[RMDB]
The record gives the reactivity of an RNA of 207 nucleotides to 2A3 and DMS.
Reactivities are rounded to 0.1 and cut off at 0 and 3.
Conditions: 150 mM KOAc, 10 mM MgCl2 and 150 mM bicine (pH 8.5), 24 C.
It was measured as part of the RMDB library OK3TST.
RNA sequence: GGGAACGACUCGAGUAGAGUCGAAAAGUUCAGCCGCUGUGGAAACUGAUGCGUUGGAAGUGGGACAACGGGUCCCGGGCCUUUAAUACGGAGUAUCAGAACAACCCGAUCGACGAAGAAAGCGCAAUAUUCGUCCCUGAGAAAUUCCGCUAUUACGACGACUCAUAUAGUUCGCUAUAUGAGUCGUAAAAGAAACAACAACAACAAC
Reactivity to 2A3 in 0.01 (KOAc 150mM, MgCl2 10mM, bicine 150mM(pH8.5), 24C), signal-to-noise 3, nucleotides 027 to 156: g020u030u060c010a010g020c010c030g040c060u020g020u080g150g050a070a090a050c040u010g030a070u060g030c020g040u070u060g040g010a120a120g040u140g030g000g010a020c050a140a080c080g070g050g000u000c010c000c000g010g090g000c030c010u060u140u160a080a030u100a070c050g010g010a040g030u030a030u050c010a000g010a060a030c020a030a040c000c000c010g020a060u090c050g020a030c010g000a030a040g050a090a090a040g080c070g000c060a060a120u060a080u070u010c000g000u000c050c020c030u030g010a020g040a030a050a010u060u030c020c000g030c070u080a100u150u150a100c120g020
Reactivity to DMS in 0.01 (KOAc 150mM, MgCl2 10mM, bicine 150mM(pH8.5), 24C), signal-to-noise 3, nucleotides 027 to 156: g010u000u000c030a090g030c010c030g020c030u000g000u000g010g010a110a100a110c050u000g010a060u010g010c060g040u010u010g000g000a100a160g030u030g000g020g020a080c030a070a080c110g010g020g030u010c010c060c030g010g020g020c030c030u010u000u000a050a110u000a110c010g030g030a120g040u000a090u000c040a080g000a070a100c060a060a170c030c010c010g000a090u000c030g000a040c020g010a040a090g020a120a100a130g000c060g000c010a020a130u000a280u000u010c020g010u000c010c070c000u000g010a100g010a060a050a130u000u000c010c020g000c070u010a140u000u000a100c100g030